An RNA of 207 nucleotides, treated with DMS and 2A3 and read out base by base. For DMS, 4,144 sequencing reads were counted. Conditions: 150 mM KOAc, 10 mM MgCl2 and 150 mM bicine (pH 8.5), 24 C.
RNA sequence: GGGAACGACUCGAGUAGAGUCGAAAAGUGUGAAGUGAGUGAGCCUCUUACGAGCACGAAUUACAAGGCUCUAUUGACAUUACUGGGCGCCAGGAGCCCUACCUGGACAAGUCUCGAAGAUCGGGCCGCGAUUGAGAGACGACUAUUAACGGCCACACCUAUGGGUAGUAUUCGUACUACCCAUAGGAAAAGAAACAACAACAACAAC
Reactivity to DMS in 0.01 (KOAc 150mM, MgCl2 10mM, bicine 150mM(pH8.5), 24C), signal-to-noise 3, nucleotides 027 to 156: g010u010g000u010g010a120a150g050u000g010a130g020u000g000a120g050c040c030u000c020u000u000a110c060g010a300g050c060a090c050g000a100a210u020u000a080c140a080a080g010g010c020u000c020u010a080u010u000g010a080c070a140u000u000a060c100u010g030g040g000c140g020c030c060a060g000g010a100g000c030c030c020u000a040c010c010u000g000g000a060c000a080a170g020u000c020u010c010g000a160a170g000a050u000c010g010g050g020c040c040g000c040g000a110u000u000g000a300g020a100g010a050c000g000a080c030u000a110u000u010a070a090c010g030g010c000c030a070c100a200
Reactivity to 2A3 in 0.01 (KOAc 150mM, MgCl2 10mM, bicine 150mM(pH8.5), 24C), signal-to-noise 4, nucleotides 027 to 156: g020u020g010u010g040a070a070g030u010g020a020g010u070g020a030g020c010c010u060c010u070u050a040c020g010a010g030c040a020c080g050a040a070u190u100a110c050a120a050g010g000c010u000c010u020a090u040u160g050a010c030a060u030u140a120c080u120g000g020g050c070g000c010c000a030g010g020a030g020c010c000c000u010a020c010c010u010g050g020a040c000a110a010g010u000c010u000c030g030a070a030g000a020u010c010g010g120g080c050c030g080c060g020a000u030u090g010a010g010a010g010a040c010g000a000c010u060a060u200u150a090a110c020g020g000c000c000a040c010a020